[RMDB]
An RNA of 177 nucleotides, treated with DMS and 2A3 and read out base by base. For DMS the reverse transcriptase was MarathonRT. For DMS, 24,168 sequencing reads were counted. The RNA was probed in 150 mM KOAc, 10 mM MgCl2 and 150 mM bicine (pH 8.5) at 24 C. The data come from the RNA Mapping Database (RMDB), library M2PK50.
RNA sequence: GGGAACGACUCGAGUAGAGUCGAAAAAUGCACUGGUUCGCCAGUGCAUGAUUACGGAGAAAGUACCUCGGUAUAAAAGUGCAACCCUUGGAAACAAGGGAAUUCCGAACCGAUUCGUCGGUUCGAAGUAUAACUCUAGUUUCGACUAGAGUUAUACAAAAGAAACAACAACAACAAC
Reactivity to DMS in 0.01 (KOAc 150mM, MgCl2 10mM, bicine 150mM(pH8.5), 24C), signal-to-noise 9, nucleotides 027 to 126: a010u000g000c000a010c000u000g000g010u000u010c240g030c000c000a000g010u000g010c000a000u000g000a090u000u010a080c070g000g010a060g010a090a100a130g010u010a060c060c010u000c050g010g020u000a060u010a040a050a070a080g010u000g010c120a110a140c010c000c000u000u000g000g000a160a100a190c000a000a010g000g000g000a040a030u010u000c070c010g000a000a010c000c000g010a030u000u010c160g020u000c000g010g000u000u000c000g010a020a060
Reactivity to 2A3 in 0.01 (KOAc 150mM, MgCl2 10mM, bicine 150mM(pH8.5), 24C), signal-to-noise 8, nucleotides 027 to 126: a000u000g000c000a000c000u000g000g040u040u030c130g060c070c000a000g000u000g000c000a000u000g000a000u000u070a020c040g090g010a040g030a040a180a030g100u050a040c010c020u030c050g040g030u090a100u050a140a110a030a030g110u080g070c030a060a170c000c000c000u000u000g000g010a040a040a010c000a000a000g000g000g020a000a010u050u000c050c000g000a000a000c000c000g000a000u020u050c190g040u000c000g050g000u000u000c000g000a020a020